RNA sequence: GGGAACGACUCGAGUAGAGUCGAAAAGGGGUCUUCAAACAGCGACAUGCGAGUGAACUACAGCUGAAGCCUCCACGGCUGCACUCGCAACAGCGCUGGUAGAAGACGGAGGCACCCAAAAGCGUUAUUACAUCCGUUCGCGGAUGUAAUAACGCAAUCUUCUAUGGCUAUUCGUAGCCAUAGAAGAAAAAGAAACAACAACAACAAC
Reactivity to 2A3 in 0.01 (KOAc 150mM, MgCl2 10mM, bicine 150mM(pH8.5), 24C), signal-to-noise 4, nucleotides 027 to 156: g030g020g020g010u030c020u010u010c050a210a300a200c010a010g020c010g090a100c140a180u300g000c000g000a020g000u010g010a130a120c090u190a130c250a010g010c020u030g010a060a010g010c000c010u000c000c010a050c040g000g010c020u040g020c010a000c000u010c010g010c030a030a020c040a040g050c010g000c000u000g000g000u010a050g000a020a000g000a000c000g000g000a000g000g000c000a040c000c000c000a050a090a020a020g000c000g010u000u000a000u000u000a000c000a000u000c020c000g060u060u120c230g000c020g120g000a000u000g010u000a000a000u000a000a000c000g000c000a000a010
Reactivity to DMS in 0.01 (KOAc 150mM, MgCl2 10mM, bicine 150mM(pH8.5), 24C), signal-to-noise 1, nucleotides 027 to 156: g020g020g040g020u000c000u010u000c040a160a130a110c010a010g050c000g000a050c030a180u000g000c000g020a070g030u010g010a080a140c080u000a300c010a030g000c000u000g000a070a150g010c000c000u010c010c000a300c030g040g030c000u000g000c000a030c020u000c010g000c000a050a020c080a080g040c010g040c010u010g010g000u000a130g000a040a020g000a100c010g020g020a020g000g000c020a070c010c000c010a050a120a110a150g050c000g110u000u000a000u010u000a000c010a010u010c000c000g020u000u000c300g030c040g070g000a000u000g010u010a040a000u000a020a010c000g050c000a010a010